[RMDB]
RNA sequence: GGGAACGACUCGAGUAGAGUCGAAAAUCAAACGAUUUCGAUCGUUUGAAACGGACCACUCCUGCGCGAGUUAAGGCCAUACGGACAGCCGGGUCCACUGCCAGUCAUUCGGUUUCGACCGAAUGAACCCUUAACAUGUAUUCGUACAUGUUAAGGGAAAAGAAACAACAACAACAAC
Reactivity to DMS in 0.01 (KOAc 150mM, MgCl2 10mM, bicine 150mM(pH8.5), 24C), signal-to-noise 9, nucleotides 027 to 126: u000c000a000a010a010c000g010a010u000u000u020c190g020a020u000c000g010u000u000u000g000a010a100a120c190g000g000a040c010c010a070c020u000c020c020u020g020c280g010c140g000a020g010u000u010a090a050g010g020c000c020a080u000a070c150g000g000a030c030a230g000c010c010g000g000g000u000c000c010a080c160u020g000c010c010a070g010u000c000a000u000u000c000g000g000u000u000u010c210g010a020c000c000g000a010a000u000g000a020a090
Reactivity to 2A3 in 0.01 (KOAc 150mM, MgCl2 10mM, bicine 150mM(pH8.5), 24C), signal-to-noise 6, nucleotides 027 to 126: u020c000a000a000a000c000g010a010u040u070u170c220g110a020u010c000g010u000u000u010g000a020a000a010c070g000g010a010c000c000a010c010u020c010c040u300g140c110g030c170g060a010g010u030u190a150a070g010g000c010c000a050u060a080c070g010g010a010c010a010g000c010c000g020g000g000u000c010c010a010c020u040g010c010c000a020g090u020c000a000u000u000c000g020g020u030u050u130c250g090a020c000c000g000a000a000u000g000a020a030

An RNA of 177 nucleotides, treated with DMS and 2A3 and read out base by base.
For DMS the reverse transcriptase was MarathonRT.
For DMS, 25,202 sequencing reads were counted.
DMS (dimethyl sulfate) methylates the pairing face of unpaired adenines and cytosines.
The 2A3 profile rests on 62,218 reads.
Source: RMDB library M2PK50, as collected in RNAgym.